[RMDB]
RNA sequence: GGGAACGACUCGAGUAGAGUCGAAAAGAUAUGGAUUGGUCGAGAAAUGUGUCGGAAACGACAUGCAUUUCGAUGAGACCACUGUCCUAAGUCAAAACUUGAGGAAUGGUUCGCCAUUCCUCAAGAACUUUUGCGAGAUGUUCGCAUCUCGCAAAAGAAAAGAAACAACAACAACAAC
Reactivity to DMS in 0.01 (KOAc 150mM, MgCl2 10mM, bicine 150mM(pH8.5), 24C), signal-to-noise 2, nucleotides 027 to 126: g000a100u000a290u000g010g000a020u000u000g000g000u000c000g000a180g010a000a010a000u000g020u000g000u000c000g010g000a120a050a220c000g000a000c000a050u010g000c080a020u000u000u000c020g010a100u010g010a190g000a000c000c010a020c300u010g000u000c030c010u000a060a140g000u010c120a070a050a170a120c010u000u000g000a000g010g010a010a000u000g000g000u000u010c300g010c020c000a020u000u000c000c000u000c010a000a000g000a100a070
Structure probing data (DMS) for a 177-nucleotide construct. For DMS, 1,050 sequencing reads were counted. The data come from the RNA Mapping Database (RMDB), library TTRDEL. The reactions ran in a buffer of 150 mM KOAc, 10 mM MgCl2 and 150 mM bicine (pH 8.5), at 24 C.